The record gives the reactivity of an RNA of 177 nucleotides to DMS and 2A3.
2A3 adducts were read by reverse transcription with SuperScript II with manganese.
RNA sequence: GGGAACGACUCGAGUAGAGUCGAAAAGAUAUGGAUCCGGAUAGGGAGCUGUGAUUCGGAAACGAAUCAUACAGCAUCGAUCUAUACGGAUCCUAAGUCAAAGGGGCGAUCGUUCGCGAUCGCCCCACCAUAACGAUGCGUUCGCGCAUCGUUAUGGAAAAGAAACAACAACAACAAC
Reactivity to DMS in 0.01 (KOAc 150mM, MgCl2 10mM, bicine 150mM(pH8.5), 24C), signal-to-noise 2, nucleotides 027 to 126: g000a050u000a080u020g000g000a000u010c000c000g000g010a020u000a020g000g000g010a110g020c000u000g040u000g000a050u010u010c020g000g010a040a030a080c010g000a010a010u000c000a110u000a150c070a000g020c000a270u020c230g010a120u000c000u000a020u010a010c000g000g000a040u000c000c000u000a000a070g000u000c020a080a080a070g020g020g000g040c000g000a020u000c000g030u000u010c300g020c020g010a010u000c010g040c000c000c010c000a000
Reactivity to 2A3 in 0.01 (KOAc 150mM, MgCl2 10mM, bicine 150mM(pH8.5), 24C), signal-to-noise 2, nucleotides 027 to 126: g000a010u030a000u060g010g000a010u000c010c000g000g000a010u030a000g160g100g040a240g000c010u020g000u000g020a000u000u010c000g000g040a000a020a000c010g000a000a000u010c020a090u250a130c050a000g040c000a030u300c220g120a120u000c030u000a000u010a000c020g040g000a000u000c000c000u000a010a000g020u000c030a040a120a190g000g000g000g030c030g020a040u010c000g010u160u100c300g010c020g210a010u030c010g000c000c030c010c000a010
Reactivities are given for positions 27 through 126. DMS adducts were read by reverse transcription with MarathonRT.